[RMDB]
RNA sequence: GGGAACGACUCGAGUAGAGUCGAAAAGAAAGAAAGAAAUUAGCUCGCCAGUUAGCGAGGUCUGUCCCCACACGACAGGUAAUCGGGUGCAACUCCCGCCCCUUUUCCGAGGGUCAUCGGAACCAAAAAAACUCAGGCAACUUCGGUUGCCUGAGAAUCAUUAUCGGCAGUUCGCUGCCGAUAAUGAAAAAGAAACAACAACAACAAC
Reactivity to 2A3 in 0.01 (KOAc 150mM, MgCl2 10mM, bicine 150mM(pH8.5), 24C), signal-to-noise 2, nucleotides 027 to 156: g000a000a120a000g040a070a140a020g080a020a130a030u170u100a090g040c000u010c020g000c050c040a180g090u240u210a010g020c000g000a000g010g000u010c000u010g010u010c000c010c030c010a040c010a000c030g020a000c000a000g000g050u100a040a060u080c010g000g000g000u020g000c010a000a000c000u010c020c000c000g000c000c000c000c000u060u080u020u070c010c000g010a010g000g000g030u060c030a000u000c000g000g010a010a010c010c000a050a120a100a030a010a000a000c000u000c000a000g000g000c000a000a000c000u050u040c180g070g000u000u010g000c000c000u000g000a000g000a000a000